Structure probing data (DMS and 2A3) for a 207-nucleotide construct. For DMS the reverse transcriptase was MarathonRT. High DMS reactivity at an A or C suggests that its Watson-Crick edge is free. Conditions: 150 mM KOAc, 10 mM MgCl2 and 150 mM bicine (pH 8.5), 24 C.
RNA sequence: GGGAACGACUCGAGUAGAGUCGAAAACCAGAUGACGGUCCUGCCAUGAGACCGCAACGAGAGCAUGUCGCAUCGAAUGGGCUCGGGGAGUCGGCAGCUUGCCCCACGGAUGAGCGCCUAAUGCCGGAAGAGACGUGCAACUUCGGUUGCACGUCAACGAGACAAUAGGAUUCGUCCUAUUGUCUCGAAAAGAAACAACAACAACAAC
Reactivity to DMS in 0.01 (KOAc 150mM, MgCl2 10mM, bicine 150mM(pH8.5), 24C), signal-to-noise 2, nucleotides 027 to 156: c010c020a140g010a150u010g000a030c030g040g030u010c020c070u000g090c050c260a070u000g000a100g010a010c030c010g070c030a060a120c050g000a160g010a050g030c040a140u000g020u000c030g000c050a140u010c050g000a100a180u020g010g030g010c050u010c070g020g030g020g010a060g000u000c000g010g010c020a090g040c060u020u000g000c010c010c010c010a240c080g000g020a120u000g000a100g000c030g000c050c040u010a040a120u000g000c000c020g010g020a080a120g010a190g010a010c010g030u010g000c000a020a000c000u000u000c230g030g000u000u000g000c000a010c000g020u010c000a010a050
Reactivity to 2A3 in 0.01 (KOAc 150mM, MgCl2 10mM, bicine 150mM(pH8.5), 24C), signal-to-noise 5, nucleotides 027 to 156: c020c010a020g060a140u110g030a040c010g010g000u030c030c020u070g170c070c060a170u150g040a050g010a100c020c020g010c030a060a070c050g090a010g010a020g070c050a060u140g040u160c080g000c060a050u030c080g070a100a110u100g010g030g000c030u020c040g010g000g020g010a040g060u080c030g000g020c010a030g010c010u070u160g060c000c000c020c020a060c050g080g000a100u130g030a040g000c030g070c000c020u100a140a030u120g030c010c010g020g040a090a020g070a050g000a040c000g010u010g000c010a000a000c000u040u060c130g080g000u010u000g010c000a010c000g000u000c000a000a000